[RMDB]
RNA sequence: GGGAACGACUCGAGUAGAGUCGAAAAACUGCCUGAGUACGCUCAGGCAGACCGCGCUCUCUCCAUUACACUACCCUGCCUCUUCUCCACGAGAGGCAGCGGGGUGUAGUGGAUAGAGCACGGGUAAGUUCGUCCAGUAAUUCGUUACUGGACGAACAAAAGAAACAACAACAACAAC
Reactivity to 2A3 in 0.01 (KOAc 150mM, MgCl2 10mM, bicine 150mM(pH8.5), 24C), signal-to-noise 8, nucleotides 027 to 126: a000c000u000g000c010c000u010g000a000g000u040a040c280g030c070u010c000a000g000g000c000a000g000a000c000c000g000c000g010c000u000c000u000c000u000c000c010a010u010u020a000c000a010c010u300a300c000c000c010u010g000c010c000u040c000u100u040c120u050c070c040a100c250g010a000g000a000g000g000c000a000g010c020g000g000g000g000u000g000u000a000g010u000g000g000a000u000a000g000a000g000c000a000c000g000g000g030u090a090a030
Reactivity to DMS in 0.01 (KOAc 150mM, MgCl2 10mM, bicine 150mM(pH8.5), 24C), signal-to-noise 1, nucleotides 027 to 126: a130c020u010g000c000c000u020g020a010g000u000a070c300g010c000u000c010a010g000g000c000a010g000a000c000c000g000c100g000c000u000c000u010c080u020c000c000a000u000u000a020c000a000c000u000a070c010c000c020u000g000c030c000u010c020u000u000c090u040c240c130a120c180g010a030g010a010g000g030c000a000g040c160g000g020g000g000u000g000u000a000g020u000g000g000a010u020a000g000a000g000c000a010c000g000g000g010u030a080a070
Conditions: 150 mM KOAc, 10 mM MgCl2 and 150 mM bicine (pH 8.5), 24 C. The record gives the reactivity of an RNA of 177 nucleotides to 2A3 and DMS. As a SHAPE reagent, 2A3 marks flexible, mostly unpaired nucleotides at the ribose 2'-OH. DMS adducts were read by reverse transcription with MarathonRT. It was measured as part of the RMDB libraries RFM100 and RFMREP.